[RMDB]
RNA sequence: GGGAACGACUCGAGUAGAGUCGAAAAAAGUUCGGAGGGAAAUCCCAAGAAGGUCAUUCGAGAUUCAAGAGGUGAGGAGGGAUCCCCGAGACGCUGGAGGAGCACCGGGAAAAAGAAAAGAAGGCAAGUAUCGGUAGGUUCGCCUACCGAAAAAGAAACAACAACAACAAC
Reactivity to DMS in 0.01 (KOAc 150mM, MgCl2 10mM, bicine 150mM(pH8.5), 24C), signal-to-noise 5, nucleotides 027 to 129: a100a060g010u040u020c060g000g000a050g000g020g000a050a040a070u000c040c020c020a110a110g030a070a030g000g000u020c050a090u060u050c080g020a050g000a020u040u000c100a020a050g010a050g000g000u020g030a040g000g000a010g040g010g020a040u020c030c050c010c090g010a060g020a050c270g000c090u020g030g010a040g030g010a040g040c060a050c020c000g040g010g040a000a010a040a070a000g040a030a040a060a030g020a040a030g000g000c120a080a040g000u040a090
Reactivity to 2A3 in 0.01 (KOAc 150mM, MgCl2 10mM, bicine 150mM(pH8.5), 24C), signal-to-noise 4, nucleotides 027 to 129: a010a000g060u060u020c010g030g020a020g020g030g010a020a080a040u050c010c000c000a000a020g050a000a000g040g020u040c040a030u080u080c080g040a030g000a060u090u070c040a060a020g010a010g050g000u040g030a010g000g000a010g000g010g000a020u040c020c000c000c010g040a040g000a000c040g030c040u020g030g020a040g050g000a020g020c030a020c030c000g000g010g000a010a050a030a040a000g080a010a050a010a000g070a030a040g030g020c060a020a040g030u040a070